[RMDB]
RNA sequence: GGGAACGACUCGAGUAGAGUCGAAAACUGGAGAGACCUAUAAGUAGCAACAUCUUUGUAUUGACACCAAGAUGUGCUCUAGGCGCCGAAGGGGCAAGAAGAGUAAAACAACUCCUCCAAUCUCUCAUCAUUUAAUAGAGUUCGCUCUAUUAAAUGAAAAAGAAACAACAACAACAAC
Reactivity to DMS in 0.01 (KOAc 150mM, MgCl2 10mM, bicine 150mM(pH8.5), 24C), signal-to-noise 5, nucleotides 027 to 126: c060u000g010g020a060g010a070g000a080c020c020u010a070u000a270a080g000u030a010g020c010a050a060c000a010u000c000u000u000u000g000u010a300u020u000g010a160c200a030c070c080a010a010g010a030u000g010u000g010c000u000c010u000a030g000g000c160g020c040c010g020a090a070g020g010g010g010c030a140a170g000a040a040g000a030g000u000a020a070a120a110c300a070a060c020u000c000c030u000c020c050a030a080u010c040u000c000u000c030a190
Reactivity to 2A3 in 0.01 (KOAc 150mM, MgCl2 10mM, bicine 150mM(pH8.5), 24C), signal-to-noise 5, nucleotides 027 to 126: c020u040g000g010a050g010a000g010a040c000c020u060a050u050a300a030g170u170a000g040c030a030a180c000a040u000c000u030u050u040g040u040a170u090u300g140a060c040a000c140c000a000a000g000a020u010g000u010g000c000u000c000u000a010g010g000c030g000c050c000g070a140a070g180g060g010g010c020a020a010g030a060a020g020a010g020u100a040a160a060a120c050a020a020c010u010c000c000u000c010c000a040a110u010c010u020c000u010c020a060
The record gives the reactivity of an RNA of 177 nucleotides to DMS and 2A3. The data come from the RNA Mapping Database (RMDB), library RFMREP. For 2A3 the reverse transcriptase was SuperScript II with manganese. Reactivities are given for positions 27 through 126. The reactions ran in a buffer of 150 mM KOAc, 10 mM MgCl2 and 150 mM bicine (pH 8.5), at 24 C.